[RMDB]
RNA sequence: GGGAACGACUCGAGUAGAGUCGAAAACUACGCUGUGCAGAGAAUGAAAUGCGCACCUUCUUACUGCUGCGACGGUGCUCGGCACGGCUUACGCGGGCGGGGGAAGGAAAUAGCGGCCUGGCGUGAGGGACCAGGCGGAUUUCGAUCCGCCUGGUCCAAAAGAAACAACAACAACAAC
Reactivity to 2A3 in 0.01 (KOAc 150mM, MgCl2 10mM, bicine 150mM(pH8.5), 24C), signal-to-noise 1, nucleotides 027 to 126: c000u000a090c000g010c000u020g000u000g040c030a030g000a000g100a140a000u220g000a030a030a080u040g050c060g020c000a070c000c000u100u020c000u000u160a240c050u020g140c000u060g110c010g000a040c030g090g000u020g020c010u030c080g060g000c040a000c160g000g010c000u000u000a020c090g000c080g150g020g000c010g000g060g000g000g060a110a050g000g050a010a040a040u280a110g130c120g040g030c000c020u000g150g000c010g010u050g020a080g030